[RMDB]
RNA sequence: GGGAACGACUCGAGUAGAGUCGAAAAAGGCCUAAUAUGGCCAUCCGAGUGAGGGAUGGCAAUCAACUCUAAUCGAAGGAAUAGAGAAGGACUUGAGUGAGGGAUGGCUGCAUGAAUUAUCUAGGAAGGCAUUGAGCUAGAGUGAGGGAUGGUGCCACUCUGUCAUAUUAUUCGUAAUAUGACAGAGAAAAGAAACAACAACAACAAC
Reactivity to 2A3 in 0.01 (KOAc 150mM, MgCl2 10mM, bicine 150mM(pH8.5), 24C), signal-to-noise 9, nucleotides 027 to 156: a000g080g010c050c010u090a140a080u130a140u230g100g000c000c000a000u000c000c010g030a090g070u120g070a090g010g050g020a010u020g020g020c030a010a050u090c040a030a070c030u020c020u130a060a150u100c050g120a090a060g050g030a060a070u050a070g020a010g040a090a030g030g000a020c010u050u050g030a020g050u060g030a040g010g030g000a020u060g020g000c020u020g010c030a040u070g040a090a060u130u100a060u100c060u040a020g040g040a050a010g040g000c030a040u030u140g020a020g020c030u040a020g010a010g090u070g030a030g000g010g010a020u040g010g000u030g010c010c010a040
Reactivity to DMS in 0.01 (KOAc 150mM, MgCl2 10mM, bicine 150mM(pH8.5), 24C), signal-to-noise 4, nucleotides 027 to 156: a050g000g020c010c010u000a070a090u000a110u000g010g020c000c000a010u000c000c000g020a200g020u010g030a200g020g010g010a030u000g000g050c010a060a060u000c070a060a100c020u010c020u000a060a080u000c080g020a100a090g050g010a080a200u000a070g010a050g010a090a090g020g010a050c030u000u000g010a120g030u000g020a100g010g020g020a070u000g020g000c030u000g000c050a100u000g010a100a090u000u000a090u000c050u000a080g030g010a060a060g020g040c060a110u000u000g010a080g020c050u000a080g010a090g030u000g010a080g030g030g010a100u000g020g000u000g020c030c040a130
The record gives the reactivity of an RNA of 207 nucleotides to 2A3 and DMS. For 2A3, 9,996 sequencing reads were counted. For 2A3 the reverse transcriptase was SuperScript II with manganese.